[RMDB]
RNA sequence: GGGAACGACUCGAGUAGAGUCGAAAACAUGAUGCAUGAAACGUAUACGUAGAAAAUGCGUAUGCGGGAAUAUGGAGUGACAGGAAACUGAAGAAAUGCAUCAUGGAAAAGAAAAUUCCAUAUUCGAGGGAUAUUCUUAGUUCGCUAAGAAUAUCCCAAAAGAAACAACAACAACAAC
Reactivity to 2A3 in 0.01 (KOAc 150mM, MgCl2 10mM, bicine 150mM(pH8.5), 24C), signal-to-noise 5, nucleotides 027 to 126: c010a000u000g000a000u010g010c010a000u050g070a070a120a000c020g010u010a000u010a010c010g000u010a040g130a170a230a050a090u100g000c000g000u010a000u000g010c000g000g010g010a010a000u020a020u010g030g000a020g030u090g050a030c010a020g040g030a070a060a010c040u050g020a090a050g040a060a210a000u000g000c000a000u000c010a000u010g010g130a010a060a010a020g190a000a050a000a030u030u000c000c000a000u000a000u010u010c000g030a120
Reactivity to DMS in 0.01 (KOAc 150mM, MgCl2 10mM, bicine 150mM(pH8.5), 24C), signal-to-noise 3, nucleotides 027 to 126: c000a000u020g000a000u000g000c000a030u000g000a050a150a080c040g000u000a010u000a010c000g000u000a090g000a080a080a180a110u010g000c000g000u000a010u000g040c000g030g010g010a000a000u000a000u010g000g000a030g030u030g010a150c030a070g000g000a140a120a200c000u000g000a120a090g010a130a100a000u000g000c000a010u000c000a000u000g000g010a060a070a160a130g010a050a040a050a070u040u000c000c000a000u000a000u010u000c000g010a220